The record gives the reactivity of an RNA of 177 nucleotides to DMS and 2A3.
For DMS, 17,685 sequencing reads were counted.
For DMS the reverse transcriptase was MarathonRT.
Values cover nucleotides 27 to 126.

RNA sequence: GGGAACGACUCGAGUAGAGUCGAAAAGAUAUGGACUGGAUGGUGUUCAACAGCUCGGAAACGAGACAUGAACUCAUCACAGUCCUAAGUCAAAACAUCUAGUACGCCUUCGGGCGUACUAGAUGAACAGAUUGUUAUUGUUCGCAAUAACAAUCUGAAAAGAAACAACAACAACAAC
Reactivity to DMS in 0.01 (KOAc 150mM, MgCl2 10mM, bicine 150mM(pH8.5), 24C), signal-to-noise 9, nucleotides 027 to 126: g000a040u000a300u000g000g000a010c000u000g010g000a020u000g010g010u010g010u000u000c000a020a080c280a180g000c010u000c000g000g000a090a090a210c000g000a010g000a040c100a220u000g000a010a010c000u000c000a000u000c000a090c000a010g010u000c000c000u000a000a080g010u000c050a110a070a110a190c010a010u000c000u000a010g000u000a000c000g020c000c000u000u010c230g020g010g020c000g010u000a000c000u000a000g010a000u000g010a050a130
Reactivity to 2A3 in 0.01 (KOAc 150mM, MgCl2 10mM, bicine 150mM(pH8.5), 24C), signal-to-noise 5, nucleotides 027 to 126: g010a010u060a030u140g000g000a000c010u010g010g000a000u010g020g180u220g040u120u010c020a090a080c060a190g040c000u000c010g020g010a060a070a040c010g010a010g020a020c020a030u100g000a000a000c000u000c020a000u010c020a030c010a060g000u000c000c000u000a010a000g020u000c020a000a030a060a150c000a000u000c000u000a000g000u000a000c000g000c000c010u060u140c300g090g000g000c000g000u000a000c000u000a000g000a000u000g000a000a000